The record gives the reactivity of an RNA of 177 nucleotides to DMS. Source: RMDB library OK2TST, as collected in RNAgym. Conditions: 150 mM KOAc, 10 mM MgCl2 and 150 mM bicine (pH 8.5), 24 C.
RNA sequence: GGGAACGACUCGAGUAGAGUCGAAAAGUUGGAUGUCCCGGUCCCUGCAUUGGAGAUGGCACUUAGGCAAAUCCGGGUGCGUGAUUCAAGGGUGUGGGGCGAGCGACUUUAGGUCGCGAAGCAAUUGGACACGAGCUAUUUUCGAAUAGCUCGUGUCAAAAGAAACAACAACAACAAC
Reactivity to DMS in 0.01 (KOAc 150mM, MgCl2 10mM, bicine 150mM(pH8.5), 24C), signal-to-noise 2, nucleotides 027 to 126: g010u000u000g000g020a110u010g000u000c000c000c000g040g000u010c000c010c010u020g010c030a030u000u000g040g010a300g000a080u000g000g000c010a030c000u000u000a100g060g030c100a150a070a130u010c000c180g020g000g000u000g010c010g000u010g010a130u000u000c000a010a300g000g000g010u020g010u010g010g000g000g000c090g010a110g010c010g010a000c010u000u010u020a140g010g000u000c000g000c000g010a050a130g000c200a110a130u000u000g010